[RMDB]
RNA sequence: GGGAACGACUCGAGUAGAGUCGAAAAGAAUUAGCGGGCAGCAUAAUAAGUUUGAUGCGGGCCGUUUUAGCUAUGACUCAGAUAUCUGGUUCGCUCAAUUGGGUCAUGAUUUCUAUCAAGCUGAAAAACUAGAGUAUUUAUUCGUAAAUACUCUAGUAAAAGAAACAACAACAACAAC
Reactivity to 2A3 in 0.01 (KOAc 150mM, MgCl2 10mM, bicine 150mM(pH8.5), 24C), signal-to-noise 3, nucleotides 027 to 126: g030a030a100u160u090a050g030c040g010g050g030c030a000g010c010a020u060a080a040u120a270a050g060u070u210u170g030a010u030g010c000g030g000g100c010c030g010u030u030u040u090a010g000c000u030a030u300g010a010c010u030c110a000g020a120u040a030u070c030u050g020g020u060u050c050g020c050u040c140a050a210u100u120g010g000g000u000c000a020u110g030a040u030u080u000c000u020a070u040c000a030a000g020c030u080g040a090a120a030a010
Reactivity to DMS in 0.01 (KOAc 150mM, MgCl2 10mM, bicine 150mM(pH8.5), 24C), signal-to-noise 4, nucleotides 027 to 126: g010a110a100u010u000a080g010c030g010g010g020c020a110g000c020a020u000a060a090u000a120a160g000u000u010u010g010a030u000g000c030g000g010g020c010c010g020u000u010u000u000a030g010c020u010a070u000g010a050c200u000c110a020g020a080u010a040u010c040u000g010g000u000u000c040g030c170u010c120a060a110u010u010g010g010g010u000c010a030u000g000a080u000u000u000c030u000a150u000c040a060a060g010c020u000g000a050a060a080a100